Structure probing data (2A3 and DMS) for a 207-nucleotide construct.
[RMDB]
RNA sequence: GGGAACGACUCGAGUAGAGUCGAAAAAUUCACUGCCGGCCUCCACUACAAACAUCAUCUAAGCGUUCCCGCUCUGCCUAGGCAUCGGGCUAAACCAUCCCCACCUGUCUAUAGCAGGUUGCCAAUUCAACGGGGAGCCGGAUGGAUGUAACCGGCACCCUAGUAGGUUAUUCGUAACCUACUAGGGAAAAGAAACAACAACAACAAC
Reactivity to 2A3 in 0.01 (KOAc 150mM, MgCl2 10mM, bicine 150mM(pH8.5), 24C), signal-to-noise 2, nucleotides 027 to 156: a000u130u090c020a010c050u030g080c040c040g030g010c000c020u010c010c010a050c010u150a030c030a060a230a050c010a060u110c000a010u040c030u120a080a030g070c020g040u050u040c000c010c000g000c010u040c010u030g020c010c030u020a080g110g000c000a030u130c050g020g040g000c020u100a030a010a000c230c000a010u010c010c000c010c000a010c010c010u000g050u100c070u190a130u140a120g010c020a000g030g000u020u120g010c000c000a070a130u200u200c020a010a030c010g000g000g000g000a000g000c000c000g010g000a000u030g000g020a000u000g000u000a010a000c000c000g000g020c000a000
Reactivity to DMS in 0.01 (KOAc 150mM, MgCl2 10mM, bicine 150mM(pH8.5), 24C), signal-to-noise 1, nucleotides 027 to 156: a070u020u000c050a100c040u000g000c050c050g030g050c040c000u000c000c000a100c070u010a130c060a210a090a110c140a070u030c030a060u000c060u000a050a070g050c020g000u000u000c000c000c030g000c060u030c020u010g000c020c050u000a090g050g030c030a030u040c070g000g020g010c030u000a040a040a060c000c010a060u000c000c000c000c030a300c030c000u040g060u000c030u000a060u000a200g000c000a010g000g000u000u010g000c000c110a080a130u000u010c160a010a080c110g010g000g010g010a100g030c000c000g020g000a090u000g000g000a070u000g010u000a100a160c010c000g000g040c000a260
The reactions ran in a buffer of 150 mM KOAc, 10 mM MgCl2 and 150 mM bicine (pH 8.5), at 24 C.